[RMDB]
RNA sequence: GGGAACGACUCGAGUAGAGUCGAAAAACGCACUUUGAUAGCACUUGUCGCCUUAGUAGGAUCAGCUGCGUCGCCUUCUGUUUUUGCCAUCCACUCUGUAUUUCUCAUUUUAUGCCACGUUAGUGCAGCAAGUAUUAAAAUUAAUACCACAAUAACCAACGUUGUAGAAUUUCGAUUCUACAACGUUAAAAGAAACAACAACAACAAC
Reactivity to DMS in 0.01 (KOAc 150mM, MgCl2 10mM, bicine 150mM(pH8.5), 24C), signal-to-noise 4, nucleotides 027 to 156: a080c060g020c040a060c060u000u000u000g020a110u010a090g020c040a090c040u000u000g010u010c050g030c020c000u000u000a100g020u000a090g030g010a080u010c060a110g020c020u000g020c020g000u000c050g020c020c020u000u000c040u010g010u000u000u020u000u010g000c010c010a090u000c040c020a060c050u000c030u010g020u000a070u000u010u000c010u030c030a180u000u000u020u000a080u010g010c020c030a060c070g010u000u000a080g030u000g020c040a080g020c050a070a100g020u000a050u010u010a030a070a080a110u000u000a040a040u000a030c010c020a060c050a060a140u000a090a130c110c030
Reactivity to 2A3 in 0.01 (KOAc 150mM, MgCl2 10mM, bicine 150mM(pH8.5), 24C), signal-to-noise 8, nucleotides 027 to 156: a000c070g040c020a060c040u100u080u140g060a060u110a070g010c030a030c060u050u080g040u090c050g040c030c000u090u060a050g060u060a030g040g050a060u080c050a020g030c020u040g010c020g060u060c030g070c020c000u080u080c030u040g120u030u060u010u070u090g030c020c010a040u000c010c000a020c020u020c020u020g030u070a070u010u090u010c030u000c020a060u040u070u060u160a080u120g020c000c010a040c040g030u070u090a030g000u030g060c020a020g000c020a060a030g040u030a050u070u110a070a110a050a020u110u130a050a030u060a070c010c020a040c030a100a080u100a110a030c060c040
Structure probing data (DMS and 2A3) for a 207-nucleotide construct.
For DMS, 12,211 sequencing reads were counted.
Reactivities are given for positions 27 through 156.
The data come from the RNA Mapping Database (RMDB), library OK3TST.